[RMDB]
RNA sequence: GGGAACGACUCGAGUAGAGUCGAAAAGAUAUGGAUGUGGACAUGCUCGAUUGGGUCGGAAACGACCUAAAGAGCAACAGCCAUGUCCUAAGUCUAAAAGUUAAGUGUUCUUCGGAACACUUAACAACACCUACACUAGCUUCGGCUAGUGUAGGUGAAAAGAAACAACAACAACAAC
Reactivity to 2A3 in 0.01 (KOAc 150mM, MgCl2 10mM, bicine 150mM(pH8.5), 24C), signal-to-noise 1, nucleotides 027 to 126: g000a010u050a040u170g030g000a000u010g020u000g030g000a050c050a160u090g000c000u010c040g190a260u050u120g000g000g000u000c000g000g000a040a040a000c000g000a000c000c020u010a000a030a000g000a000g030c020a010a010c040a020g050c000c000a020u000g030u000c000c000u010a140a000g040u030c030u060a070a110a110a090g010u020u010a000a010g000u000g000u030u000c000u070u090c300g010g010a000a000c000a000c000u000u000a000a000c000a000a000
Reactivity to DMS in 0.01 (KOAc 150mM, MgCl2 10mM, bicine 150mM(pH8.5), 24C), signal-to-noise 2, nucleotides 027 to 126: g020a000u000a300u030g000g000a020u000g030u000g050g000a100c110a200u010g000c000u010c000g000a260u040u000g020g010g020u000c010g020g010a120a060a210c000g000a020c000c000u000a000a040a060g010a010g010c000a000a060c300a140g000c000c020a020u000g000u000c000c000u010a040a060g000u000c030u000a040a110a130a080g010u000u000a000a000g000u000g020u000u000c000u030u000c280g020g000a020a010c000a000c000u000u000a000a000c020a090a210
This 177-nucleotide RNA was probed chemically with 2A3 and DMS. DMS adducts were read by reverse transcription with MarathonRT. The RNA was probed in 150 mM KOAc, 10 mM MgCl2 and 150 mM bicine (pH 8.5) at 24 C. Values cover nucleotides 27 to 126. The data come from the RNA Mapping Database (RMDB), library TTRDEL. For 2A3, 3,042 sequencing reads were counted.